[RMDB]
RNA sequence: GGGAACGACUCGAGUAGAGUCGAAAACGACAUGUAGCUCUCGGGGCGCGGCGGUGACGUCCAGGGUGCGCGCGACAUGCGCCCGCAGCGCUUCUAGCGUUGGUGGUGGGCAUCCGUCGCCGACCACUGUGGAUCAAUCGUUCGCGAUUGAUCCACAAAAAGAAACAACAACAACAAC
Reactivity to DMS in 0.01 (KOAc 150mM, MgCl2 10mM, bicine 150mM(pH8.5), 24C), signal-to-noise 1, nucleotides 027 to 126: c060g010a090c110a080u010g010u010a110g010c030u000c020u000c060g020g010g020g010c040g000c020g030g000c020g010g000u010g010a090c100g010u010c030c060a100g020g000g020u010g030c020g030c080g000c040g000a090c180a090u000g000c010g030c000c000c000g020c020a000g010c000g000c000u010u040c190u020a050g010c020g020u000u010g040g020u000g010g010u000g000g010g010c040a040u000c090c060g000u000c020g010c010c020g000a090c050c000a080c110
Reactivity to 2A3 in 0.01 (KOAc 150mM, MgCl2 10mM, bicine 150mM(pH8.5), 24C), signal-to-noise 1, nucleotides 027 to 126: c040g050a030c060a060u250g040u160a030g090c020u000c020u060c100g010g040g020g000c030g030c020g050g030c000g020g010u080g020a060c050g000u000c020c000a000g110g030g030u140g020c060g030c000g000c010g050a130c040a160u140g000c030g100c000c030c000g040c000a000g010c000g000c000u200u110c100u300a030g000c010g030u000u040g100g020u110g070g010u110g000g050g030c000a040u090c060c010g020u040c000g000c010c000g020a040c020c030a040c050

Conditions: 150 mM KOAc, 10 mM MgCl2 and 150 mM bicine (pH 8.5), 24 C. The record gives the reactivity of an RNA of 177 nucleotides to DMS and 2A3. The 2A3 profile rests on 1,862 reads.